[RMDB]
RNA sequence: GGGAACGACUCGAGUAGAGUCGAAAAAUGGUGUCAAACACGGACUCGUUCGGGCACUCCAGCAGAGCAUCUAAAAGACGAGGAAGGUUACGGUCCGUCGCCAUACGGACGAUGAUCGUGUACAGAGGAAAGCUCGAUGACUUUGGGGAGAAGUACGUGGCAUUCUUAAAUUCGUUUAAGAAUGCCAAAAAGAAACAACAACAACAAC
Reactivity to 2A3 in 0.01 (KOAc 150mM, MgCl2 10mM, bicine 150mM(pH8.5), 24C), signal-to-noise 3, nucleotides 027 to 156: a020u130g000g020u080g050u080c080a120a110a030c040a020c060g040g020a020c010u020c050g040u060u040c020g000g020g000c040a030c050u030c010c010a030g020c000a020g040a010g030c010a010u080c020u140a070a070a050a030g040a020c050g010a030g010g020a030a030g040g020u070u050a030c060g030g030u030c030c040g010u000c020g000c050c020a080u080a230c090g000g050a010c010g000a050u100g000a010u040c020g030u040g010u070a030c050a040g040a020g060g030a040a110a000g020c010u000c040g000a040u050g010a030c020u050u050u050g030g000g000g030a060g000a020a040g000u090a060c090g060
Reactivity to DMS in 0.01 (KOAc 150mM, MgCl2 10mM, bicine 150mM(pH8.5), 24C), signal-to-noise 3, nucleotides 027 to 156: a080u000g010g010u000g020u010c080a110a070a110c060a090c070g000g000a110c030u000c050g020u000u000c020g000g010g030c090a070c030u000c020c030a160g010c080a140g000a040g010c030a090u000c060u020a110a090a080a160g020a080c030g000a100g010g010a080a080g010g010u000u000a050c060g010g000u000c010c000g000u010c030g010c040c030a170u010a130c180g020g010a040c020g000a030u000g000a040u000c010g030u000g000u000a090c070a140g000a090g000g040a090a070a080g000c020u000c040g000a130u000g010a060c060u000u000u010g000g000g010g010a120g010a050a100g020u010a060c100g030